[RMDB]
RNA sequence: GGGAACGACUCGAGUAGAGUCGAAAACAGAGCUGAUGGGCCAUGUACCUAUCCAAAAUGAGAUCCCAUCUUGCACACUGUCCUAAUUUGAGAUUCUCAUGCCUCCUACUUGGAGAGAUCUGGACUACUAACUGUAUGACGUUCGCGUCAUACAGAAGAAGUAACAUCCGUUCGCGGAUGUUACUUCAAAAGAAACAACAACAACAAC
Reactivity to 2A3 in 0.01 (KOAc 150mM, MgCl2 10mM, bicine 150mM(pH8.5), 24C), signal-to-noise 5, nucleotides 027 to 156: c010a000g020a010g010c040u040g000a010u000g000g020g010c030c010a060u080g040u220a210c040c030u120a110u170c070c070a070a050a030a040u120g010a150g020a190u130c000c010c000a000u010c000u060u160g000c030a030c010a040c090u040g010u030c000c010u120a170a260u100u120u140g100a100g010a100u160u030c020u010c070a040u150g040c010c010u030c000c010u100a300c090u180u190g000g010a010g010a020g000a010u040c050u070g000g000a020c050u080a040c010u030a210a040c020u010g010u000a000u000g000a010c010g010u040u020c200g040c000g110u000c000a000u000a010c000a010g000a000a020
Reactivity to DMS in 0.01 (KOAc 150mM, MgCl2 10mM, bicine 150mM(pH8.5), 24C), signal-to-noise 1, nucleotides 027 to 156: c030a110g000a090g020c040u000g010a050u010g010g030g050c090c060a220u020g100u000a040c030c010u010a110u020c040c100a080a070a140a060u020g030a080g000a130u000c020c030c000a050u000c040u000u010g000c000a120c110a100c180u000g000u010c070c050u000a080a090u010u010u020g000a090g000a090u010u000c000u000c010a010u000g020c000c000u000c000c000u000a080c140u010u000g030g000a010g010a050g000a060u000c050u000g010g030a120c030u000a080c300u000a070a150c000u010g000u000a000u000g030a040c040g040u000u000c300g040c000g030u000c000a070u000a010c030a000g000a030a110